[RMDB]
RNA sequence: GGGAACGACUCGAGUAGAGUCGAAAAGAAGUGGCAGGGACAUGCCCCACAAGCUCGUUCUAGCAACAUAUGUUUGGCUAGUUCGAGCGAUUAGUCUGGAGGAGCGUCCUCUCGCCUUUUAACGAGACGAUGACGUAGUCUUCGGACUACGUCAUCGAAAAGAAACAACAACAACAAC
Reactivity to DMS in 0.01 (KOAc 150mM, MgCl2 10mM, bicine 150mM(pH8.5), 24C), signal-to-noise 2, nucleotides 027 to 126: g020a070a090g000u010g000g030c000a040g000g000g030a030c010a120u020g000c010c000c010c000a060c100a100a090g000c000u000c000g000u010u000c000u000a040g020c000a020a000c040a210u100a090u040g010u010u030u020g020g010c010u000a010g030u000u030c010g000a000g040c000g000a000u000u020a050g000u030c230u000g060g010a170g030g000a120g040c080g010u000c000c000u040c020u020c070g020c020c010u020u050u040u060a060a160c190g000a140g000a230
Reactivity to 2A3 in 0.01 (KOAc 150mM, MgCl2 10mM, bicine 150mM(pH8.5), 24C), signal-to-noise 4, nucleotides 027 to 126: g130a050a020g100u050g020g000c020a010g050g000g000a020c020a020u240g010c000c020c020c000a010c020a000a040g000c000u000c000g000u000u000c000u000a000g010c000a040a040c030a130u270a110u300g110u100u080u080g160g030c000u010a000g000u000u000c000g000a000g000c000g010a000u000u030a010g070u060c120u080g110g040a180g020g050a050g050c030g030u010c000c020u040c000u020c050g000c000c000u000u020u000u070a070a010c030g000a020g040a010
Conditions: 150 mM KOAc, 10 mM MgCl2 and 150 mM bicine (pH 8.5), 24 C. An RNA of 177 nucleotides, treated with DMS and 2A3 and read out base by base. The 2A3 profile rests on 3,864 reads.